[RMDB]
RNA sequence: GGGAACGACUCGAGUAGAGUCGAAAAUUCCUGAAGUAGUAUUUGAAAGUACACUUAGGAUUACUAGAACUCUGUCAACUCAGUACUGCCGGUUCGGUAGUUGUGAGUAUGCACAAGAGGGUGUUUGAAGCUUAAUCGUUCGCGAUUAAGAAAAGAAACAACAACAACAAC
Reactivity to 2A3 in 0.01 (KOAc 150mM, MgCl2 10mM, bicine 150mM(pH8.5), 24C), signal-to-noise 9, nucleotides 027 to 129: u070u010c010c000u020g050a050a010g010u290a010g000u000a040u060u090u230g280a160a110a010g010u000a000c010a000c010u010u020a010g040g030a060u060u090a080c060u070a040g110a130a010c000u000c000u020g010u020c010a000a000c010u010c010a020g040u030a000c000u020g020c020c000g250g110u190u300c090g030g000u040a000g000u020u010g190u000g060a000g010u030a250u030g070c130a020c020a130a000g010a020g030g050g020u050g050u020u080u100g060a050a010g030
Reactivity to DMS in 0.01 (KOAc 150mM, MgCl2 10mM, bicine 150mM(pH8.5), 24C), signal-to-noise 9, nucleotides 027 to 129: u030u020c010c000u000g010a000a000g040u000a110g050u020a010u020u020u000g020a170a140a130g010u000a000c030a030c020u000u010a040g000g000a050u010u010a050c050u010a080g010a120a120c010u030c000u050g000u000c000a050a040c000u000c030a070g020u020a040c020u000g020c030c010g030g050u040u060c070g000g030u000a020g000u010u030g010u000g000a040g000u000a090u040g010c200a020c030a030a040g000a050g030g030g030u000g000u000u030u030g020a120a090g010
Record summary
Chemical mapping of a 170-nucleotide RNA with 2A3 and DMS. DMS adducts were read by reverse transcription with MarathonRT. The DMS profile rests on 68,986 reads. The reactions ran in a buffer of 150 mM KOAc, 10 mM MgCl2 and 150 mM bicine (pH 8.5), at 24 C. Values cover nucleotides 27 to 129.